RNA sequence: GGGAACGACUCGAGUAGAGUCGAAAACAUUUUGUUUGGCUUCAGUUGGAAGCGUGUUAAGAGACUCGAAUUCUUUGCUGCUGUGUGCUGCUGUGUGUGCACGGGUGUGUCUUCAAAUGACCCCAAAUCUACUUCGGUCAUUCGUGACCGAAGUAGAAAAAGAAACAACAACAACAAC
Reactivity to 2A3 in 0.01 (KOAc 150mM, MgCl2 10mM, bicine 150mM(pH8.5), 24C), signal-to-noise 5, nucleotides 027 to 126: c010a060u150u150u060u300g070u030u030u030g010g000c000u010u020c050a290g050u120u300g130g010a020a000g000c030g030u140g010u030u010a230a110g100a020g030a050c010u000c070g040a060a090u130u010c030u060u090u130g010c020u030g000c020u030g000u010g010u020g080c010u010g010c020u020g020u020g020u020g020u050g140c040a020c070g000g000g010u160g010u040g010u040c020u010u030c050a100a080a160u160g040a050c000c000c000c000a000a090a020
Reactivity to DMS in 0.01 (KOAc 150mM, MgCl2 10mM, bicine 150mM(pH8.5), 24C), signal-to-noise 2, nucleotides 027 to 126: c040a110u050u070u030u020g030u010u020u020g020g000c010u000u010c000a180g060u020u010g000g000a050a000g000c000g040u030g000u000u000a100a100g000a160g000a030c020u000c030g000a060a120u030u000c020u000u000u000g050c050u000g000c000u020g000u020g020u030g000c040u000g000c040u010g000u000g000u040g000u000g000c070a050c110g010g010g010u040g000u020g000u030c020u000u000c190a050a080a140u020g000a120c000c010c000c090a000a050a110
Structure probing data (2A3 and DMS) for a 177-nucleotide construct. The reactions ran in a buffer of 150 mM KOAc, 10 mM MgCl2 and 150 mM bicine (pH 8.5), at 24 C. High 2A3 reactivity points to a flexible backbone, as in loops and unpaired stretches.